[RMDB]
This 177-nucleotide RNA was probed chemically with DMS. For DMS, 855 sequencing reads were counted. The reactions ran in a buffer of 150 mM KOAc, 10 mM MgCl2 and 150 mM bicine (pH 8.5), at 24 C. It was measured as part of the RMDB library TTRDEL. Values cover nucleotides 27 to 126.

RNA sequence: GGGAACGACUCGAGUAGAGUCGAAAAGAUAUGGAUCGUCAGCCAACAGCGUCGUGUCGGAAACGACACAGACGACAUGGGCGAUCCUAAGUCAAAAGAUUACGCCCGGUUCGCCGGGCGUAAUCAACAUCGUAGGACGGUUCGCCGUCCUACGAUGAAAAGAAACAACAACAACAAC
Reactivity to DMS in 0.01 (KOAc 150mM, MgCl2 10mM, bicine 150mM(pH8.5), 24C), signal-to-noise 1, nucleotides 027 to 126: g000a040u000a100u040g000g010a010u000c010g050u000c000a040g020c030c080a110a170c200a280g010c000g040u000c000g010u000g010u000c000g020g000a000a000a030c000g010a000c000a010c010a030g040a010c020g000a040c100a300u010g010g010g000c000g020a010u000c000c010u010a000a060g010u010c010a140a100a080a130g000a000u000u000a010c010g000c020c000c010g040g000u020u010c270g050c000c000g010g000g030c000g000u000a000a000u000c000a110a130